[RMDB]
RNA sequence: GGGAACGACUCGAGUAGAGUCGAAAAAUAAUACCUUACGUAAAUGCGAAGAUGUUUACAUCCCAUCUGUCAUCACAGCUAUUGAUGGUGUUUGGUAUUUAACAUUUAAACCGGCACUCAAGAUCGAUAUCCAUGGUAGUUAUUACGUAGUUGAUAACGACUCAUAUAGUUUCGACUAUAUGAGUCGAAAAGAAACAACAACAACAAC
Reactivity to 2A3 in 0.01 (KOAc 150mM, MgCl2 10mM, bicine 150mM(pH8.5), 24C), signal-to-noise 4, nucleotides 027 to 156: a000u110a000a020u050a080c010c040u020u020a020c020g010u020a000a050a050u130g030c040g020a080a000g020a060u050g030u020u070u080a070c040a050u100c000c030c040a050u030c020u050g070u030c030a020u020c010a040c010a100g030c090u120a080u090u100g020a040u030g030g040u020g060u000u120u170g030g010u050a090u060u130u050a090a010c020a040u110u060u180a060a030a020c010c000g010g000c030a010c040u110c070a080a030g050a120u030c040g020a050u050a010u110c050c050a030u100g030g010u040a050g040u020u100a070u110u020a010c060g020u030a010g010u020u050g020a100u030a130a010
Reactivity to DMS in 0.01 (KOAc 150mM, MgCl2 10mM, bicine 150mM(pH8.5), 24C), signal-to-noise 2, nucleotides 027 to 156: a070u000a070a070u020a070c010c000u000u010a090c060g030u000a050a120a110u000g050c070g000a110a070g040a020u010g020u000u000u000a100c070a170u000c030c020c020a110u000c020u020g000u010c070a040u010c050a100c080a090g020c110u000a050u000u000g000a080u000g020g020u000g020u000u010u000g190g050u000a100u000u000u000a050a100c100a110u010u000u000a050a150a060c040c010g020g010c020a020c010u010c110a040a060g010a080u000c050g020a080u000a070u020c010c030a140u010g020g010u010a030g000u000u010a070u000u000a060c060g010u000a170g020u000u000g000a120u010a070a270